[RMDB]
RNA sequence: GGGAACGACUCGAGUAGAGUCGAAAACGGUUACGCCUUCUUUACAGUUAUCAAGGAAGGUACUCGGCCAUGCUAAGGGAAGCAUUAUUCCUUAGGCGCAUGUCGCCGCCAGCAUGGUGUGAGGGGAAAAAGUAUGCUGGGUUCGCCCAGCAUACAAGUAAAAUUAAUCCUUCGGGAUUAAUUUUACAAAAGAAACAACAACAACAAC
Reactivity to DMS in 0.01 (KOAc 150mM, MgCl2 10mM, bicine 150mM(pH8.5), 24C), signal-to-noise 2, nucleotides 027 to 156: c040g010g030u000u010a040c080g020c010c000u000u020c010u000u010u000a160c080a150g020u010u010a140u020c100a040a050g020g000a050a020g010g030u000a000c010u000c010g000g050c000c000a020u000g000c000u020a190a140g020g010g000a020a050g000c210a140u000u010a150u000u000c010c000u000u000a120g030g040c000g000c040a100u010g020u010c020g040c030c000g020c120c070a050g030c000a020u000g020g020u000g010u010g000a080g000g000g000g000a020a030a080a090a160g010u000a000u000g010c010u000g000g000g040u000u030c300g010c010c000c000a000g000c010a010u000a000c000a010a150
Reactivity to 2A3 in 0.01 (KOAc 150mM, MgCl2 10mM, bicine 150mM(pH8.5), 24C), signal-to-noise 4, nucleotides 027 to 156: c020g010g040u130u130a050c080g000c000c010u010u010c000u040u080u050a110c080a200g070u190u160a150u260c080a010a020g010g000a000a000g010g010u040a030c010u000c000g030g000c000c000a000u000g010c000u050a050a040g000g000g010a010a010g000c060a200u110u140a140u190u160c000c000u040u080a090g010g000c010g010c080a160u290g090u300c010g000c030c010g030c050c020a000g000c000a000u000g000g000u060g120u120g050a020g020g020g030g040a000a130a040a000a020g010u000a000u000g000c000u010g000g010g020u020u030c120g060c030c000c000a000g000c000a000u000a000c000a000a000